[RMDB]
RNA sequence: GGGAACGACUCGAGUAGAGUCGAAAAAAAAGCUCCACAUAUGUGAGCAGCCGCUCCCCAGUGCCCUGUCCUCCUGCCCCGGGUGAGCACUGAUGCGCUCUCUGCCUCUGUGGCUGUGCCUAGUCCGGUACAGAGUCUGGUUCGCCAGACUCUGUACAAAAGAAACAACAACAACAAC
Reactivity to DMS in 0.01 (KOAc 150mM, MgCl2 10mM, bicine 150mM(pH8.5), 24C), signal-to-noise 1, nucleotides 027 to 126: a030a070a140a020g010c020u000c020c020a050c160a240u010a100u010g020u020g010a070g010c030a070g010c070c050g010c080u000c010c020c030c060a060g010u010g020c050c070c070u000g030u000c010c010u000c030c010u000g000c040c010c020c080g020g010g040u020g030a060g020c030a060c030u000g020a080u010g030c030g010c020u000c020u000c020u000g030c070c010u000c090u000g000u000g020g020c040u020g000u000g030c010c030u000a100g000u010c050c110g020